Source information
The record gives the reactivity of an RNA of 207 nucleotides to 2A3 and DMS. DMS adducts were read by reverse transcription with MarathonRT. Conditions: 150 mM KOAc, 10 mM MgCl2 and 150 mM bicine (pH 8.5), 24 C. For DMS, 2,120 sequencing reads were counted.
RNA sequence: GGGAACGACUCGAGUAGAGUCGAAAAAGUCCACUAGGUACGCCUAGUGCACAUUCCAGGACAUACUGCUGAGGAUGUCAAAAAUGCAGUUGGAGUCCUCAACUGGAUAGGCUACGGCCUAUCCAGAAAAAGACUUGGUUGUUCGCAACCAAGUCAAGCUUGAUAAUGUCUUCGGACAUUAUCAAGCAAAAGAAACAACAACAACAAC
Reactivity to 2A3 in 0.01 (KOAc 150mM, MgCl2 10mM, bicine 150mM(pH8.5), 24C), signal-to-noise 1, nucleotides 027 to 156: a000g030u030c020c000a010c000u000a000g000g000u040a030c210g070c010c000u000a010g000u010g000c010a000c000a040u090u060c010c020a000g020g010a010c010a040u140a040c020u010g070c010u010g040a040g190g110a300u170g300u300c170a050a090a020a030a030u170g000c010a010g010u060u010g070g100a140g020u020c000c010u000c030a070a070c010u010g010g010a000u000a000g000g000c030u030a020c260g080g000c000c000u000a000u000c000c000a010g000a030a020a000a000a000g000a000c000u010u000g000g000u000u000g000u040u020c140g030c060a000a000c000c010a000a000g000u000c000a000a020
Reactivity to DMS in 0.01 (KOAc 150mM, MgCl2 10mM, bicine 150mM(pH8.5), 24C), signal-to-noise 1, nucleotides 027 to 156: a160g000u010c060c000a030c010u010a020g020g000u000a090c300g060c000c020u000a010g010u000g000c060a070c030a170u000u010c000c030a180g000g020a080c050a050u010a040c050u000g060c070u000g000a110g000g010a060u010g000u010c030a010a060a150a130a170u000g000c050a120g030u000u000g000g000a230g000u010c000c020u000c040a060a150c020u020g010g000a000u000a010g010g030c000u010a180c300g090g000c000c000u010a000u000c010c010a070g000a000a080a080a110a090g000a030c000u010u000g010g010u010u000g060u010u010c280g000c000a030a030c010c000a000a010g030u000c000a050a070